Chemical mapping of a 177-nucleotide RNA with DMS and 2A3. It was measured as part of the RMDB library OK1LIB. For DMS the reverse transcriptase was MarathonRT. For 2A3 the reverse transcriptase was SuperScript II with manganese. Values cover nucleotides 27 to 126.

[RMDB]
RNA sequence: GGGAACGACUCGAGUAGAGUCGAAAAGACGAAGUGGAGCGGAUGGGGAGACGUUGGCUCACAAAAACGAGCAGAUGCCCGGCCUCGACCUGUCGCCGGAGCAGCUCUUCUUCGUGGGAUUAAAAAGGCAUAUUACUGGCUUCGGCCAGUAAUAUGCAAAAGAAACAACAACAACAAC
Reactivity to DMS in 0.01 (KOAc 150mM, MgCl2 10mM, bicine 150mM(pH8.5), 24C), signal-to-noise 1, nucleotides 027 to 126: g000a130c000g000a010a030g010u010g000g010a020g070c060g010g010a100u020g000g010g000g110a190g000a030c100g000u000u020g000g000c040u020c020a100c110a070a090a060a140a130c060g010a060g000c050a090g000a070u040g000c000c000c000g020g000c000c040u000c040g000a130c100c020u130g000u020c300g000c050c000g000g000a160g000c000a020g010c000u000c000u000u000c010u000u000c000g000u000g000g000g000a120u030u040a040a020a040a170a000g010
Reactivity to 2A3 in 0.01 (KOAc 150mM, MgCl2 10mM, bicine 150mM(pH8.5), 24C), signal-to-noise 3, nucleotides 027 to 126: g100a030c000g000a000a020g010u010g010g030a020g010c040g040g040a110u060g050g020g040g030a090g010a050c050g010u070u110g080g030c000u000c040a030c060a000a190a080a010a010c150g020a010g000c010a010g070a140u140g000c000c000c000g020g000c000c000u150c060g120a280c020c100u120g040u060c010g000c000c000g030g000a080g020c030a020g030c010u000c000u020u000c000u010u010c000g000u020g040g000g000a080u130u300a040a060a040a010a010g180